[RMDB]
An RNA of 177 nucleotides, treated with DMS and 2A3 and read out base by base. For 2A3 the reverse transcriptase was SuperScript II with manganese. For DMS, 9,229 sequencing reads were counted. The RNA was probed in 150 mM KOAc, 10 mM MgCl2 and 150 mM bicine (pH 8.5) at 24 C. Values cover nucleotides 27 to 126. For DMS the reverse transcriptase was MarathonRT. It was measured as part of the RMDB library TTRINS.
RNA sequence: GGGAACGACUCGAGUAGAGUCGAAAAGAUAUGGAUACCGUACUAAGGGAGCUGACGUAGAGGACGUCGGAAACGACGUCUACCCACCUACGAGAACAGCGAAGAACUUAGUACGGUAUCCUAAGUCCACUUAAUACAAGUUCGCUUGUAUUAAGUGAAAAGAAACAACAACAACAAC
Reactivity to DMS in 0.01 (KOAc 150mM, MgCl2 10mM, bicine 150mM(pH8.5), 24C), signal-to-noise 6, nucleotides 027 to 126: g010a100u010a240u000g010g010a020u000a010c000c000g020u000a010c010u000a010a020g000g000g010a060g020c010u000g010a240c010g010u010a010g010a150g000g010a020c010g030u000c000g000g000a080a080a190c000g020a000c010g010u000c010u000a050c010c010c050a300c120c010u000a010c010g010a230g010a150a190c030a010g010c010g010a070a190g010a150a200c000u000u000a010g010u000a000c000g000g010u000a000u000c000c000u000a010a080g000u000c080
Reactivity to 2A3 in 0.01 (KOAc 150mM, MgCl2 10mM, bicine 150mM(pH8.5), 24C), signal-to-noise 4, nucleotides 027 to 126: g070a100u130a090u230g010g000a010u000a020c010c000g000u000a000c010u000a030a020g060g010g000a020g010c010u030g020a080c010g010u010a010g000a030g020g010a000c000g010u000c010g010g020a060a050a000c010g010a000c010g010u000c000u050a070c020c020c000a020c010c000u010a010c020g030a060g200a300a100c030a010g030c040g210a300a040g010a030a010c010u010u020a000g000u000a000c000g010g000u000a000u000c000c000u000a000a000g000u000c000